[RMDB]
RNA sequence: GGGAACGACUCGAGUAGAGUCGAAAAAAGAAAUGUUGCAGCACAAACAACGUUUUUUUAACUGGGCAGUCUUUUAACUCGGUCGCUUCGACUGUCACUGCCACAUAACGCCGCUGCCGAUCGUCACUCAUGCAUCAUCCUUCGGGAUGAUGCAUGAAAAAGAAACAACAACAACAAC
Reactivity to DMS in 0.01 (KOAc 150mM, MgCl2 10mM, bicine 150mM(pH8.5), 24C), signal-to-noise 2, nucleotides 027 to 126: a020a080g000a030a030a020u000g000u000u000g010c110a180g030c230a120c300a080a140a180c050a010a000c000g040u000u000u000u080u000u020u000a080a190c200u010g000g000g030c000a050g000u010c030u010u030u030u000a070a100c100u030c040g020g000u000c040g080c140u000u000c100g000a050c020u000g000u000c090a050c030u020g010c030c000a000c080a020u090a060a080c070g000c080c000g010c000u000g000c030c000g040a050u000c070g000u040c010a140c140
Reactivity to 2A3 in 0.01 (KOAc 150mM, MgCl2 10mM, bicine 150mM(pH8.5), 24C), signal-to-noise 4, nucleotides 027 to 126: a000a000g120a020a030a040u050g000u040u010g030c190a190g040c050a100c110a130a150a010c010a060a040c020g000u000u000u000u010u000u020u090a100a080c050u030g000g050g000c000a040g020u020c040u020u290u090u150a050a040c030u020c050g020g020u010c000g040c160u190u150c060g020a010c010u020g040u050c040a030c090u040g010c010c000a080c000a030u090a070a020c050g000c000c000g000c040u040g010c010c010g000a060u020c020g030u030c000a020c070